[RMDB]
RNA sequence: GGGAACGACUCGAGUAGAGUCGAAAAACUCCUAUUCCAACACGUCCUCGUCGUACAGAGUGGUAACAUGUGUCACCUCAUAUCCAAGCUUGGGUACACGGGCUUGACCCAACCCCUUGGGCGGAUGAAAACCAGAUUACGUUCGCGUAAUCUGGAAGCUGUUGAGUUUCUUCGGAAACUCAACAGCAAAAGAAACAACAACAACAAC
Reactivity to 2A3 in 0.01 (KOAc 150mM, MgCl2 10mM, bicine 150mM(pH8.5), 24C), signal-to-noise 1, nucleotides 027 to 156: a000c100u090c020c030u060a070u160u140c040c040a030a010c040a030c130g050u040c000c000u020c050g190u050c000g000u080a080c030a050g070a040g050u070g010g070u030a010a060c020a050u130g080u010g010u050c020a010c020c020u150c070a160u050a000u180c000c000a000a040g050c030u030u080g000g000g000u070a020c040a020c050g040g040g000c010u190u300g280a300c000c000c000a000a070c000c000c000c000u000u010g000g000g000c000g000g000a010u020g060a040a130a000a000c000c000a000g000a000u030u000a010c090g020u000u010c170g000c020g090u020a000a000u000c010u000g000g000a000a000
Structure probing data (2A3) for a 207-nucleotide construct. It was measured as part of the RMDB library M2RFPK.